The record gives the reactivity of an RNA of 177 nucleotides to 2A3 and DMS. The data come from the RNA Mapping Database (RMDB), library M2PK90. 2A3 adducts were read by reverse transcription with SuperScript II with manganese. The reactions ran in a buffer of 150 mM KOAc, 10 mM MgCl2 and 150 mM bicine (pH 8.5), at 24 C. For 2A3, 1,667 sequencing reads were counted. DMS adducts were read by reverse transcription with MarathonRT.
RNA sequence: GGGAACGACUCGAGUAGAGUCGAAAAUCUAUCACCAGCCCAUGUUUACGACACGAAUGGGCUGUUGCAAAUUACGUAUAGCUCUUGCAACAUCGUGUCGAAUCGUUCCCAAGCUAUACGCCACAAACAUUUGUGCUUUCUUCGGAAAGCACAAAUGAAAAGAAACAACAACAACAAC
Reactivity to 2A3 in 0.01 (KOAc 150mM, MgCl2 10mM, bicine 150mM(pH8.5), 24C), signal-to-noise 2, nucleotides 027 to 126: u000c000u030a170u120c030a000c050c010a010g030c010c000c000a030u040g050u050u160u060a090c020g000a020c000a000c010g040a090a070u100g010g030g000c020u020g010u020u030g000c020a000a040a130u200u140a050c030g010u000a000u010a020g000c020u030c030u160u140g100c060a050a030c000a070u060c020g000u000g000u060c020g030a010a140u070c000g010u000u020c020c000c020a000a000g000c000u010a030u020a010c010g000c060c020a100c040a020a150a000
Reactivity to DMS in 0.01 (KOAc 150mM, MgCl2 10mM, bicine 150mM(pH8.5), 24C), signal-to-noise 2, nucleotides 027 to 126: u010c110u000a090u000c080a090c050c050a070g000c000c000c010a230u010g000u010u000u030a130c020g010a090c040a040c010g010a040a130u010g000g000g000c040u000g010u010u000g000c100a050a060a170u010u010a090c030g010u010a030u000a020g000c010u000c150u010u000g000c110a070a030c070a030u000c000g020u000g020u000c000g000a100a130u000c010g010u020u000c000c000c010a100a030g000c000u000a000u000a000c010g030c220c170a030c170a070a030a160